[RMDB]
RNA sequence: GGGAACGACUCGAGUAGAGUCGAAAAGAGCAUAGUUCAGAGGUAUGCUAUAACGGUAGGUGCCGAUUAUGUUCACAUAAAGGGAUUUGGCAUCAAAUACCCUUCUAUAGUAUGUUAUUGGGCUAUAGAUAGUAGUGUGAUUCGUCACAUUGCUAUCAAAAGAAACAACAACAACAAC
Reactivity to 2A3 in 0.01 (KOAc 150mM, MgCl2 10mM, bicine 150mM(pH8.5), 24C), signal-to-noise 9, nucleotides 027 to 126: g140a010g030c080a020u020a020g010u020u020c020a020g050a030g150g090u030a010u010g020c000u010a000u010a050a030c040g020g000u020a020g010g020u020g000c000c000g020a010u050u070a100u210g110u150u160c080a050c030a150u250a110a100a090g110g030g020a040u070u100u200g030g000c020a020u020c020a060a070a020u130a060c000c000c000u060u040c020u030a010u000a010g010u000a020u030g020u020u030a140u170u040g010g000g000c010u010a000u030a080
Reactivity to DMS in 0.01 (KOAc 150mM, MgCl2 10mM, bicine 150mM(pH8.5), 24C), signal-to-noise 9, nucleotides 027 to 126: g010a140g000c140a030u000a010g010u010u010c040a050g010a140g000g010u010a020u000g010c010u000a010u000a040a090c300g010g010u010a060g000g010u000g000c000c010g010a070u030u030a050u040g010u020u010c130a080c100a090u030a060a100a130g010g000g010a050u020u010u020g020g000c090a030u000c020a110a040a240u000a060c020c000c090u010u030c150u000a020u010a020g010u000a030u000g000u000u020a120u020u010g000g010g010c020u000a010u020a100